[RMDB]
Conditions: 150 mM KOAc, 10 mM MgCl2 and 150 mM bicine (pH 8.5), 24 C.
An RNA of 177 nucleotides, treated with 2A3 and DMS and read out base by base.
High 2A3 reactivity points to a flexible backbone, as in loops and unpaired stretches.
Values cover nucleotides 27 to 126.
The 2A3 profile rests on 5,144 reads.
RNA sequence: GGGAACGACUCGAGUAGAGUCGAAAAGAUAUGGAGCGAUACGAAGCUUGGAUUUACACAUCUGUGAUGAAUGGGUCGGAAACGACCCAUUUGCAUGGUGUGUUGUCAGCUUCGUCGCUCCUAAGUCCUAAUCAUCUCACUUCGGUGAGAUGAUUAGAAAAGAAACAACAACAACAAC
Reactivity to 2A3 in 0.01 (KOAc 150mM, MgCl2 10mM, bicine 150mM(pH8.5), 24C), signal-to-noise 3, nucleotides 027 to 126: g080a030u190a070u300g000g020a020g030c000g030a090u110a300c040g000a030a000g010c060u190u300g180g020a080u300u300u300a010c000a010c020a020u090c050u090g090u070g130a300u050g030a190a000u010g000g040g010u000c000g040g000a030a180a100c060g000a020c030c080c000a010u000u000u000g000c010a000u020g000g040u000g000u000g000u020u020g020u000c000a000g000c000u000u000c000g000u000c010g010c010u000c000c010u000a010a000g000u000c010
Reactivity to DMS in 0.01 (KOAc 150mM, MgCl2 10mM, bicine 150mM(pH8.5), 24C), signal-to-noise 2, nucleotides 027 to 126: g000a110u010a300u000g000g000a000g010c000g000a110u010a050c050g000a010a000g000c010u000u020g040g010a020u010u010u000a010c010a010c000a000u000c000u020g040u010g000a140u000g010a000a010u000g010g000g020u000c000g020g000a110a090a270c010g010a010c010c000c000a000u000u000u000g030c010a030u000g000g020u000g010u010g000u010u010g000u000c010a040g000c000u000u000c000g020u000c020g010c000u000c000c000u020a000a090g000u000c020